An RNA of 207 nucleotides, treated with DMS and 2A3 and read out base by base. It was measured as part of the RMDB library M2RFPK. The reactions ran in a buffer of 150 mM KOAc, 10 mM MgCl2 and 150 mM bicine (pH 8.5), at 24 C. The DMS profile rests on 6,031 reads.

[RMDB]
RNA sequence: GGGAACGACUCGAGUAGAGUCGAAAAGUUUAUGCAAAGGCACUUCGCAAUGUGUGCUCAAACAUUGCUUAUUCAAACACGCUUCACAAUGUGCGAAAAAGAAACAUUGUUAUAAGAGCUAAUGUUUACCACGCCUAAAGGUUCGCCUUUAGGCGAACAAUCAAUAACCGUUCGCGGUUAUUGAUUGAAAAGAAACAACAACAACAAC
Reactivity to DMS in 0.01 (KOAc 150mM, MgCl2 10mM, bicine 150mM(pH8.5), 24C), signal-to-noise 3, nucleotides 027 to 156: g020u000u000u000a060u010g000c030a030a170a080g030g020c010a040c030u000u000c080g040c110a160a120u000g030u000g010u010g030c010u000c020a140a200a010c000a010u000u000g020c000u010u000a080u010u000c050a100a140a130c070a080c040g010c040u000u000c110a080c060a050a030u000g020u010g020c050g010a040a130a080a100a120g000a150a060a030c000a020u000u000g010u000u000a120u000a070a090g010a070g010c020u000a050a110u000g000u000u010u000a090c030c080a180c000g020c010c000u000a010a010a040g010g040u000u000c300g030c010c000u000u000u000a030g040g040c000g010a000a040
Reactivity to 2A3 in 0.01 (KOAc 150mM, MgCl2 10mM, bicine 150mM(pH8.5), 24C), signal-to-noise 9, nucleotides 027 to 156: g030u080u150u100a140u150g050c070a110a090a080g120g000c020a010c020u090u070c070g020c070a030a050u050g010u000g030u020g030c050u080c140a040a050a010c010a010u010u010g000c010u070u140a190u140u160c090a020a090a040c060a010c080g010c000u010u020c020a000c000a020a000u010g010u000g000c010g100a190a050a020a030a000g080a020a020a000c000a000u000u010g020u060u090a190u040a110a070g020a010g040c050u090a130a050u070g010u030u030u020a090c040c030a050c040g000c000c010u010a000a000a000g030g010u040u070c170g150c020c000u000u000u000a000g000g000c000g010a010a000